[RMDB]
RNA sequence: GGGAACGACUCGAGUAGAGUCGAAAAUUCGGAUUGCUAAAUUCUUGAGCUCGAAAGCUGCCUUUUGAGGCGAUCCCGUCUCCUUGAGACACUUUCGAACAGUGUCAACACUUUGCUGAUCGGUGACUGCAUGAUGAUGUUUCGACAUCAUCAUGCAAAAAGAAACAACAACAACAAC
Reactivity to 2A3 in 0.01 (KOAc 150mM, MgCl2 10mM, bicine 150mM(pH8.5), 24C), signal-to-noise 1, nucleotides 027 to 126: u080u040c030g040g060a010u050u020g040c060u100a000a030a260u060u110c030u060u150g060a030g000c010u000c080g090a080a020a000g070c090u040g050c010c030u010u000u010u260g070a030g010g000c020g020a060u020c040c010c020g020u010c020u020c010c040u020u050g020a010g000a020c000a010c010u010u100u080c060g040a070a030c040a070g000u030g080u010c030a000a040c030a000c000u070u140u100g020c040u060g020a070u040c050g070g100u080g030a040c070
Reactivity to DMS in 0.01 (KOAc 150mM, MgCl2 10mM, bicine 150mM(pH8.5), 24C), signal-to-noise 2, nucleotides 027 to 126: u020u000c090g020g000a110u000u030g000c040u010a050a050a100u000u000c080u000u010g000a100g020c040u000c030g000a050a070a040g010c170u000g000c030c000u000u000u000u000g000a120g020g010c000g000a080u010c080c090c010g010u000c050u000c040c140u000u000g000a150g000a020c000a020c000u000u000u000c170g000a040a070c230a040g030u000g010u010c050a080a090c080a050c090u000u000u010g020c060u010g010a070u010c060g000g010u000g000a080c220
About this RNA: The record gives the reactivity of an RNA of 177 nucleotides to 2A3 and DMS. Conditions: 150 mM KOAc, 10 mM MgCl2 and 150 mM bicine (pH 8.5), 24 C.